Chemical mapping of a 177-nucleotide RNA with DMS and 2A3.
RNA sequence: GGGAACGACUCGAGUAGAGUCGAAAAGAUAUGGAUUGGAUAGCUUUUGACGGAAUUAUGUCGGAAACGACAUAGUUCCGAUAAGCUAUCAAUCCUAAGUCAAAAGGAAGGUGUUCGCACCUUCCAAUCUCUUAUUGAGCUUCGGCUCAAUAAGAGAAAAAGAAACAACAACAACAAC
Reactivity to DMS in 0.01 (KOAc 150mM, MgCl2 10mM, bicine 150mM(pH8.5), 24C), signal-to-noise 2, nucleotides 027 to 126: g000a000u000a090u000g000g000a020u000u000g000g000a030u000a010g010c000u000u000u000u000g010a210c160g010g000a010a000u000u000a010u000g000u000c020g010g020a030a020a060c000g000a010c000a000u000a010g000u000u000c000c000g040a000u020a010a020g020c000u000a000u000c000a000a000u000c000c000u010a010a060g000u010c000a110a090a130a180g010g010a010a020g010g040u000g020u010u020c240g030c010a010c000c000u000u000c000c000a050a030
Reactivity to 2A3 in 0.01 (KOAc 150mM, MgCl2 10mM, bicine 150mM(pH8.5), 24C), signal-to-noise 2, nucleotides 027 to 126: g010a010u020a020u060g000g010a010u030u100g300g070a020u010a010g000c000u100u150u270u300g300a300c080g000g000a000a000u000u000a000u030g000u000c000g010g000a020a010a000c000g000a000c010a000u000a010g000u020u010c010c010g000a000u000a000a000g010c010u000a000u000c000a000a000u020c000c000u000a010a000g020u010c040a090a040a130a140g000g020a000a000g000g000u040g020u040u220c300g050c090a000c000c000u010u000c000c000a000a000
The reactions ran in a buffer of 150 mM KOAc, 10 mM MgCl2 and 150 mM bicine (pH 8.5), at 24 C.